[RMDB]
RNA sequence: GGGAACGACUCGAGUAGAGUCGAAAAUCUUUCGUCAAUUUUGGCAAUCUGUUGUGCUUGAUGCAGUUUGUUUCGUGUUCAAACAUAACUUUUGCCACAUCGGCAAACUCACCUGUAACGAUUUGUGACCACUUAUGUCUUUCGAGACAUAAGUGGUAAAAGAAACAACAACAACAAC
Reactivity to 2A3 in 0.01 (KOAc 150mM, MgCl2 10mM, bicine 150mM(pH8.5), 24C), signal-to-noise 3, nucleotides 027 to 126: u000c020u020u120u100c050g050u010c040a080a090u060u090u150u140g000g000c010a010a030u070c050u090g020u000u030g000u010g030c010u010u000g000a000u040g030c010a070g080u070u100u090g180u070u230u120c120g020u040g050u020u020c000a000a000a000c000a000u020a030a010c000u010u030u030u030g020c000c010a000c000a080u030c050g020g020c020a030a030a070c050u040c030a090c030c020u070g040u160a090a020c040g070a110u080u030u190g160u130g110
Reactivity to DMS in 0.01 (KOAc 150mM, MgCl2 10mM, bicine 150mM(pH8.5), 24C), signal-to-noise 4, nucleotides 027 to 126: u000c040u000u000u000c100g030u000c050a060a090u000u000u010u000g030g000c000a020a020u000c050u010g020u000u000g020u000g010c010u000u010g010a020u010g020c010a070g010u010u010u020g010u010u010u000c080g030u000g020u000u000c000a010a010a010c020a020u000a020a020c010u000u000u000u000g010c030c000a050c300a050u000c090g010g000c030a030a030a100c100u010c050a070c040c030u000g010u010a080a100c110g000a080u010u010u000g020u000g010